[RMDB]
RNA sequence: GGGAACGACUCGAGUAGAGUCGAAAAAGUCUGUCUUUUUGGAAAUUCUUAUAUGCACAUACUGACUCCCAAUGGGUUCAGGAUCUUGUACGGAAGUUCGGAGAACCUCCUAUAACCACCGCAGACACUUCAAUACCUCCUUCGGGAGGUAUUGAAGAAAAGAAACAACAACAACAAC
Reactivity to 2A3 in 0.01 (KOAc 150mM, MgCl2 10mM, bicine 150mM(pH8.5), 24C), signal-to-noise 5, nucleotides 027 to 126: a000g010u020c030u030g080u070c050u040u130u050u100u140g090g040a100a130a170u190u030c050u100u100a110u030a040u300g070c030a030c010a050u120a050c050u040g060a020c040u090c000c000c030a040a090u280g010g040g000u010u040c050a040g010g020a100u040c030u050u130g070u100a040c090g030g040a020a020g020u020u060c050g090g040a100g000a120a110c010c000u000c000c000u140a160u060a140a020c030c030a010c020c040g000c010a000g010a010c020a010
Reactivity to DMS in 0.01 (KOAc 150mM, MgCl2 10mM, bicine 150mM(pH8.5), 24C), signal-to-noise 2, nucleotides 027 to 126: a050g030u040c040u000g010u030c020u010u010u010u000u000g040g020a040a050a010u000u030c020u010u000a060u070a090u000g000c100a010c140a050u000a110c000u010g010a090c060u000c000c020c060a060a090u030g000g040g000u020u000c040a000g000g010a030u030c120u000u000g010u010a000c090g030g040a040a080g000u000u020c050g010g050a100g000a050a040c070c000u010c090c010u030a120u020a120a100c020c010a150c060c080g000c110a070g030a090c190a200